[RMDB]
RNA sequence: GGGAACGACUCGAGUAGAGUCGAAAAAAUGCGAGGUGUCUGAACAUUGCAGAAUCAUACAGCAGUCAAUACAGCACAAGCGAUAAUAUUAAGAGAUUUAGUUGAUGCAUUAUUAUUUGAAGAUAUAGUACCAAUUCUUCUUCGGAAGAAUUGGUACAAAAGAAACAACAACAACAAC
Reactivity to 2A3 in 0.01 (KOAc 150mM, MgCl2 10mM, bicine 150mM(pH8.5), 24C), signal-to-noise 2, nucleotides 027 to 126: a000a010u100g000c000g000a050g300g000u030g040u040c010u010g050a070a030c070a120u070u080g000c000a000g120a140a030u140c060a040u180a300c060a010g100c020a000g090u070c020a010a030u040a140c000a000g020c000a020c000a040a020g000c010g040a030u010a100a040u120a050u100u120a100a010g020a000g000a060u110u040u120a070g050u030u110g050a020u050g070c010a030u150u120a090u120u000a050u070u200u210g240a250a040g020a010u190a010u030a270
Reactivity to DMS in 0.01 (KOAc 150mM, MgCl2 10mM, bicine 150mM(pH8.5), 24C), signal-to-noise 2, nucleotides 027 to 126: a000a060u090g000c010g010a240g020g010u010g020u040c000u000g040a040a020c110a010u010u040g000c020a070g000a130a040u050c300a110u050a070c120a090g040c040a040g000u000c010a040a070u010a130c070a030g000c000a020c030a080a060g030c040g050a070u020a030a040u000a060u030u070a060a100g020a070g000a020u030u000u030a030g020u000u010g010a130u020g030c000a020u050u000a030u000u000a200u000u000u080g000a080a060g000a060u000a040u010a190
Description:
An RNA of 177 nucleotides, treated with 2A3 and DMS and read out base by base. For 2A3 the reverse transcriptase was SuperScript II with manganese. Conditions: 150 mM KOAc, 10 mM MgCl2 and 150 mM bicine (pH 8.5), 24 C. It was measured as part of the RMDB library OK1LIB. Values cover nucleotides 27 to 126. The DMS profile rests on 1,542 reads. For 2A3, 1,019 sequencing reads were counted.